[RMDB]
An RNA of 207 nucleotides, treated with 2A3 and read out base by base.
RNA sequence: GGGAACGACUCGAGUAGAGUCGAAAACGUCAUGAUUGCGCAUUCCACCAUCUUUGAACCCGUGCGUAAGGAAGUGACCGGGUAUGAGGUCGACCCGUUCGGUAAGCAUAUUUUCUAUCAGGUAGACGUGAAGAAGUAAGACGUAGUGAAAACGGCAACGGAUCACGUAAUUCGUUACGUGAUCCGUAAAAGAAACAACAACAACAAC
Reactivity to 2A3 in 0.01 (KOAc 150mM, MgCl2 10mM, bicine 150mM(pH8.5), 24C), signal-to-noise 2, nucleotides 027 to 156: c070g000u030c080a080u070g060a130u060u130g030c020g010c020a010u090u060c030c030a010c030c000a140u100c100u080u120u210g180a150a120c000c000c040g000u010g010c030g060u060a070a010g050g140a090a000g000u050g030a010c010c090g010g000g000u060a100u080g070a040g060g010u040c010g000a030c000c000c060g000u040u010c050g000g030u020a040a010g050c020a010u080a120u200u060u030u020c080u030a150u040c030a000g030g010u080a040g010a130c130g030u030g000a010a050g020a060a000g040u100a040a000g020a080c040g000u000a030g010u020g000a090a000a050a020c110g040g020c020a000